[RMDB]
About this RNA:
An RNA of 177 nucleotides, treated with DMS and 2A3 and read out base by base.
RNA sequence: GGGAACGACUCGAGUAGAGUCGAAAAGAUAUGGACUACCCACCAUAAGUACGGCUACUCGGAAACGAGUAGAACUACCGUACAUUAUGAGGUCCUAAGUCAAAAGGUUAUGCUUCGGCAUAACCAACACUAUUUUCCCGUUCGCGGGAAAAUAGUGAAAAGAAACAACAACAACAAC
Reactivity to DMS in 0.01 (KOAc 150mM, MgCl2 10mM, bicine 150mM(pH8.5), 24C), signal-to-noise 2, nucleotides 027 to 126: g000a070u020a270u000g000g000a000c000u010a210c020c000c050a300c130c000a010u010a000a010g000u000a000c000g010g010c010u000a010c000u020c000g000g000a160a080a150c000g030a000g010u000a000g000a040a010c060u000a300c030c000g000u000a010c020a040u000u000a000u020g010a110g000g010u000c020c000u000a160a160g010u000c080a110a060a130a030g000g030u000u000a000u000g010c000u000u020c150g000g000c000a010u000a000a000c000c010a030a040
Reactivity to 2A3 in 0.01 (KOAc 150mM, MgCl2 10mM, bicine 150mM(pH8.5), 24C), signal-to-noise 2, nucleotides 027 to 126: g060a030u090a040u100g030g000a000c030u150a170c090c030c020a030c010c000a020u010a020a000g010u000a000c000g080g000c000u000a010c000u000c020g020g070a060a050a050c010g000a020g020u000a000g010a020a010c020u150a080c000c000g040u010a000c010a010u000u000a000u010g010a010g070g000u010c000c030u060a270a040g110u110c110a000a020a080a190g030g020u010u010a000u000g030c000u090u170c300g080g000c000a000u000a000a000c000c000a000a010
For DMS, 1,289 sequencing reads were counted. Reactivities are given for positions 27 through 126.